The data come from the RNA Mapping Database (RMDB), library M2RFOK. The record gives the reactivity of an RNA of 207 nucleotides to 2A3 and DMS. The 2A3 profile rests on 3,051 reads. The DMS profile rests on 1,826 reads. Values cover nucleotides 27 to 156. For DMS the reverse transcriptase was MarathonRT. For 2A3 the reverse transcriptase was SuperScript II with manganese.
RNA sequence: GGGAACGACUCGAGUAGAGUCGAAAACCUCACUACAUGUUACUGUUCCUAAAGAAUUUGUGACAGGUACAGUAAAACGUAUUGCAAGGUUUAUCAGUUCCUAUAAACAGGUAAAUAACAAUAUAUGAAAAGCAAAGACUGUUCGCAGUCUUUGCAACUGAUGCUUAACGUUCGCGUUAAGCAUCAGAAAAGAAACAACAACAACAAC
Reactivity to 2A3 in 0.01 (KOAc 150mM, MgCl2 10mM, bicine 150mM(pH8.5), 24C), signal-to-noise 2, nucleotides 027 to 156: c000c000u020c000a010c020u020a010c000a030u210g040u080u000a000c010u010g010u040u080c020c000u080a090a140a050g150a230a300u220u260u270g170u150g080a070c080a050g010g000u010a000c000a000g000u020a010a010a010a000c030g010u010a000u000u010g050c070a060a040g030g010u000u010u030a120u080c040a030g020u020u000c010c000u070a080u180a130a070a010c050a010g110g070u140a120a080a070u200a120a040c020a120a030u090a010u070a050u240g080a090a100a040a010g000c000a000a000a000g000a000c000u010g020u050u050c180g020c080a000g000u000c000u000u010u000g000c000a000a000
Reactivity to DMS in 0.01 (KOAc 150mM, MgCl2 10mM, bicine 150mM(pH8.5), 24C), signal-to-noise 1, nucleotides 027 to 156: c020c070u020c070a080c050u000a030c010a040u000g010u000u000a000c000u000g000u000u000c000c010u020a120a230a220g000a070a080u000u000u000g000u010g010a210c100a010g080g000u010a000c080a060g000u000a010a070a060a100c060g000u000a020u000u000g040c010a090a090g000g040u000u010u000a010u000c030a140g010u000u010c040c040u010a120u010a070a040a070c070a030g010g010u010a030a050a070u000a160a080c020a040a140u010a090u000a070u000g010a060a060a120a120g010c000a020a030a030g000a030c000u000g030u010u020c270g040c010a020g010u000c000u000u000u000g010c000a000a070